[RMDB]
RNA sequence: GGGAACGACUCGAGUAGAGUCGAAAAGCCUGCGGCUUAAUUUGACUCAACACGGGGAAACUUACCAGGUCAGGACAUGGGAAGGAUUGACAGAUUGAGAGUUCUUUCUUGAUUCCUUGGGUGGUGGCACGUGAUUGAAGUUCGCUUCAAUCACGUGAAAAGAAACAACAACAACAAC
Reactivity to DMS in 0.01 (KOAc 150mM, MgCl2 10mM, bicine 150mM(pH8.5), 24C), signal-to-noise 1, nucleotides 027 to 126: g020c030c000u000g050c230g010g050c000u000u000a010a130u000u000u000g000a020c000u010c000a050a050c050a060c060g000g000g000g000a090a090a120c060u000u010a070c050c010a070g010g020u000c030a050g010g010a040c050a060u000g010g000g000a020a040g010g020a030u000u000g000a140c140a110g000a210u000u020g000a150g010a100g030u000u000c020u020u010u000c010u010u000g010a130u010u000c010c000u000u010g000g000g000u000g000g000u000g000g000
Reactivity to 2A3 in 0.01 (KOAc 150mM, MgCl2 10mM, bicine 150mM(pH8.5), 24C), signal-to-noise 1, nucleotides 027 to 126: g000c050c110u190g280c290g030g000c000u000u060a050a020u170u050u060g020a020c000u010c080a030a010c020a010c030g000g000g000g000a000a080a050c020u050u060a050c020c000a020g010g230u040c040a010g000g040a030c020a050u120g030g000g000a020a010g000g020a000u000u080g060a040c070a060g250a170u150u280g090a200g040a040g180u000u000c000u000u030u080c000u000u100g060a150u100u050c010c000u070u140g020g000g030u050g000g000u030g040g020